[RMDB]
Notes
The record gives the reactivity of an RNA of 177 nucleotides to 2A3 and DMS. Values cover nucleotides 27 to 126. Conditions: 150 mM KOAc, 10 mM MgCl2 and 150 mM bicine (pH 8.5), 24 C. 2A3 adducts were read by reverse transcription with SuperScript II with manganese. In probing experiments dimethyl sulfate is read out at A N1 and C N3, which are open when not base-paired.
RNA sequence: GGGAACGACUCGAGUAGAGUCGAAAAUAUGGACUAGACGAUGAAGAUUUGGUGAUUGGUCUCAAAGGAAAAGAGAGAGAAUUGAAACUAGCCGGAAGAUUCUUUUCCUUGAUGUCUUGGAAAUUACACCUGAAUAAGGGUUCGCCCUUAUUCAGGUAAAAGAAACAACAACAACAAC
Reactivity to 2A3 in 0.01 (KOAc 150mM, MgCl2 10mM, bicine 150mM(pH8.5), 24C), signal-to-noise 2, nucleotides 027 to 126: u090a040u030g030g000a000c010u010a000g030a030c020g030a050u150g050a070a100g040a130u040u090u220g000g050u040g010a080u050u080g030g000u010c000u000c040a070a070a030g000g000a030a000a060a020g050a010g020a000g030a020g030a150a190u160u140g070a110a080a050c030u020a030g100c060c050g050g020a080a040g020a000u060u000c000u000u040u060u000c000c000u030u030g050a050u140g000u020c000u030u070g090g100a000a120a000u040u040a010c050
Reactivity to DMS in 0.01 (KOAc 150mM, MgCl2 10mM, bicine 150mM(pH8.5), 24C), signal-to-noise 4, nucleotides 027 to 126: u000a080u010g010g010a080c040u000a070g000a080c060g010a120u000g020a100a080g000a050u000u000u000g010g030u000g000a090u000u000g020g010u010c030u000c080a060a040a080g000g000a020a010a010a010g010a060g000a110g000a110g010a080a070u010u010g010a110a110a150c080u000a050g020c100c110g010g020a130a160g000a070u010u000c000u000u000u000u000c000c000u010u000g010a080u010g010u000c030u010u010g020g010a070a040a070u000u000a060c120

About this RNA
For DMS, 3,532 sequencing reads were counted. It was measured as part of the RMDB library OK2TRN.